RNA sequence: GGGAACGACUCGAGUAGAGUCGAAAAAGUGCGGCGUGUCGCUGCCUGACGGGAUGCCUGCACUCGACACCCUUCGAGGCAUUGCGUUCCUUCAUUCAGGGUGAUGUCGCAAUCAUCAUGGCAGCAAACUAGCGCCAUGAUUCGUCAUGGCGCUAGUAAAAGAAACAACAACAACAAC
Reactivity to 2A3 in 0.01 (KOAc 150mM, MgCl2 10mM, bicine 150mM(pH8.5), 24C), signal-to-noise 2, nucleotides 027 to 126: a000g060u020g000c010g010g010c020g000u130g100u090c050g000c080u050g050c000c010u020g030a030c020g030g020g010a000u020g000c010c030u070g000c020a070c030u000c000g000a010c000a050c030c020c000u000u040c020g000a000g030g040c060a140u050u210g040c010g020u030u010c020c000u050u060c040a150u090u060c020a010g080g000g000u020g020a050u030g050u100c080g000c140a060a050u060c010a010u000c010a010u080g100g000c040a010g000c030a010a120
Reactivity to DMS in 0.01 (KOAc 150mM, MgCl2 10mM, bicine 150mM(pH8.5), 24C), signal-to-noise 3, nucleotides 027 to 126: a060g000u010g000c010g000g000c030g020u010g020u000c040g020c040u000g020c050c070u000g010a090c080g000g000g010a020u000g020c000c140u000g030c020a090c000u000c010g000a070c110a120c080c090c050u000u000c010g010a030g000g010c070a060u000u000g020c030g010u000u000c030c000u000u010c120a070u000u000c050a080g010g010g010u000g000a030u000g010u000c190g000c110a150a070u000c030a040u000c020a070u010g000g000c140a110g010c080a080a110
Chemical mapping of a 177-nucleotide RNA with 2A3 and DMS. Conditions: 150 mM KOAc, 10 mM MgCl2 and 150 mM bicine (pH 8.5), 24 C. For DMS the reverse transcriptase was MarathonRT.